Source information: Chemical mapping of a 177-nucleotide RNA with 2A3 and DMS. High 2A3 reactivity points to a flexible backbone, as in loops and unpaired stretches.
[RMDB]
RNA sequence: GGGAACGACUCGAGUAGAGUCGAAAACAGAUGAUGUUCGCAUCAUCUGAAAUAUAAGCCAUGCAGGAAGGAAGGAGCAUGGCAACCAACCAACCAAAAUAAAAAUCUGUUCCUUCGGGAACAGAAAGCUUUACUAAAUCUUCGGAUUUAGUAAAGCAAAAGAAACAACAACAACAAC
Reactivity to 2A3 in 0.01 (KOAc 150mM, MgCl2 10mM, bicine 150mM(pH8.5), 24C), signal-to-noise 6, nucleotides 027 to 126: c010a000g000a000u000g000a000u000g030u070u080c190g010c090a000u000c000a000u000c000u000g000a000a030a000u130a010u010a050a020g000c000c000a000u010g000c010a030g160g190a250a030g140g040a080a050g030g050a130g020c000a000u000g000g000c010a000a010c020c010a010a010c010c010a010a030c010c040a060a080a080a020u250a050a130a040a010a040u010c000u000g000u000u000c010c000u010u030c240g080g000g000a010a000c010a000g000a000a000a000
Reactivity to DMS in 0.01 (KOAc 150mM, MgCl2 10mM, bicine 150mM(pH8.5), 24C), signal-to-noise 2, nucleotides 027 to 126: c000a000g000a000u010g020a000u000g020u020u010c190g030c000a010u000c000a000u010c000u010g000a020a050a120u020a090u000a140a140g000c000c000a000u000g000c000a080g010g010a230a100g010g010a150a070g000g000a170g010c000a000u000g000g000c010a040a040c070c050a080a140c190c070a030a080c100c150a110a070a060a080u000a020a060a060a080a130u000c000u000g000u000u000c000c000u000u010c130g020g010g000a000a000c000a000g000a000a010a040

The RNA was probed in 150 mM KOAc, 10 mM MgCl2 and 150 mM bicine (pH 8.5) at 24 C. The data come from the RNA Mapping Database (RMDB), library M2PK50. The DMS profile rests on 1,642 reads. For 2A3 the reverse transcriptase was SuperScript II with manganese.